Structure probing data (DMS and 2A3) for a 177-nucleotide construct. DMS adducts were read by reverse transcription with MarathonRT. The RNA was probed in 150 mM KOAc, 10 mM MgCl2 and 150 mM bicine (pH 8.5) at 24 C. Values cover nucleotides 27 to 126.

RNA sequence: GGGAACGACUCGAGUAGAGUCGAAAACGGCGCGUGGCCUGAUCACGGCGCUAGUACGACGGUACGGCCAUAGGUACCGUACUGAGUACACGCGAUCAUAGUACAGGCGCUGCGCAUGCUGAUCAGGCAUACAGACCUAAUUCGUUAGGUCUGUAUGAAAAGAAACAACAACAACAAC
Reactivity to DMS in 0.01 (KOAc 150mM, MgCl2 10mM, bicine 150mM(pH8.5), 24C), signal-to-noise 9, nucleotides 027 to 126: c090g010g010c040g020c050g020u000g020g010c000c010u000g010a050u000c030a050c060g000g000c010g010c010u000a150g020u000a010c010g010a190c260g000g000u000a010c010g010g010c110c060a300u010a120g020g020u010a070c000c000g010u000a010c030u000g000a300g010u000a030c010a150c120g000c010g000a090u010c050a090u000a130g010u010a070c120a210g000g000c010g010c060u010g010c060g010c050a040u010g010c120u000g000a050u000c040a040g000g000
Reactivity to 2A3 in 0.01 (KOAc 150mM, MgCl2 10mM, bicine 150mM(pH8.5), 24C), signal-to-noise 9, nucleotides 027 to 126: c020g070g000c020g000c020g080u070g110g030c000c000u020g000a080u050c030a000c040g020g000c000g000c010u020a040g000u000a000c080g180a050c030g040g000u000a000c000g010g030c050c040a250u230a190g140g020u120a070c000c000g000u000a000c020u040g010a010g010u010a010c020a010c040g010c000g030a080u120c030a120u120a130g080u120a060c030a060g060g000c020g020c030u090g000c010g000c010a020u070g000c050u020g010a090u070c040a030g060g000